The record gives the reactivity of an RNA of 177 nucleotides to DMS and 2A3. The RNA was probed in 150 mM KOAc, 10 mM MgCl2 and 150 mM bicine (pH 8.5) at 24 C. DMS (dimethyl sulfate) methylates the pairing face of unpaired adenines and cytosines.

[RMDB]
RNA sequence: GGGAACGACUCGAGUAGAGUCGAAAAAGCGGAGGUACGCCUCCGCAUCUAAAAUCGUGUGAUUUCGGUAUCUCCCAUUGAUAUUGAGUUCUCCUAGAAUACCUCGGUGAUGCGCCGAGGUUUUUAACCUAUCUAGAAGGUUCGCCUUCUAGAUAGGAAAAGAAACAACAACAACAAC
Reactivity to DMS in 0.01 (KOAc 150mM, MgCl2 10mM, bicine 150mM(pH8.5), 24C), signal-to-noise 6, nucleotides 027 to 126: a090g010c010g020g000a030g020g000u010a080c260g010c010c000u000c000c000g020c000a010u010c030u010a060a060a050a030u000c040g010u020g020u030g010a040u000u010u010c040g000g010u000a050u000c070u000c040c010c030a150u000u010g000a090u010a070u010u000g010a140g000u010u010c020u000c010c070u000a110g000a070a040u020a040c000c010u000c000g000g030u000g000a160u010g020c150g020c000c000g000a010g000g010u000u000u000u000u000a060a200
Reactivity to 2A3 in 0.01 (KOAc 150mM, MgCl2 10mM, bicine 150mM(pH8.5), 24C), signal-to-noise 7, nucleotides 027 to 126: a000g000c010g000g000a020g000g000u040a040c220g070c010c000u000c000c000g000c000a000u020c000u040a050a050a020a070u080c070g060u080g110u130g200a090u030u090u030c030g000g020u020a060u030c050u070c030c040c010a020u060u220g040a030u040a080u090u110g040a040g020u030u010c020u030c040c020u050a050g050a100a070u060a120c000c000u000c010g020g000u100g090a300u200g100c130g000c050c000g000a000g000g000u000u000u000u000u000a010a000